Structure probing data (DMS and 2A3) for a 177-nucleotide construct. 2A3 adducts were read by reverse transcription with SuperScript II with manganese. Conditions: 150 mM KOAc, 10 mM MgCl2 and 150 mM bicine (pH 8.5), 24 C.
RNA sequence: GGGAACGACUCGAGUAGAGUCGAAAAGAAUUCUUGUUCGCAAGAAUUCAAAUAAGAAAGCUGACCAGCUAUGAGGUCAUACAUCGUCAUAGCACAAUAUAAAAAGCUUUGUCUUCGGACAAAGCAACAAUUUGAUAUCGUUCGCGAUAUCAAAUUGAAAAGAAACAACAACAACAAC
Reactivity to DMS in 0.01 (KOAc 150mM, MgCl2 10mM, bicine 150mM(pH8.5), 24C), signal-to-noise 2, nucleotides 027 to 126: g040a010a000u000u000c000u010u000g010u000u010c160g010c000a000a000g000a050a010u000u000c010a050a100a080u000a100a110g030a140a130a130g030c230u000g020a010c000c000a140g010c010u010a000u020g000a020g000g000u000c000a070u010a120c210a090u010c150g000u010c020a000u000a000g000c000a150c180a090a040u000a060u010a060a040a070a160a110g020c030u000u010u000g000u000c000u000u010c130g010g000a000c000a020a020a000g000c010a050a030
Reactivity to 2A3 in 0.01 (KOAc 150mM, MgCl2 10mM, bicine 150mM(pH8.5), 24C), signal-to-noise 4, nucleotides 027 to 126: g000a000a010u020u010c000u030u020g040u030u070c110g000c090a000a010g000a000a000u020u000c000a000a040a020u180a030a040g210a170a080a010g100c120u050g010a010c000c000a010g000c000u010a000u010g000a000g000g020u010c040a020u170a160c070a110u150c200g060u000c000a000u010a010g090c010a020c030a010a050u230a020u140a150a150a020a040a020g010c010u000u010u000g000u000c010u010u060c240g050g010a010c000a000a000a000g020c000a000a000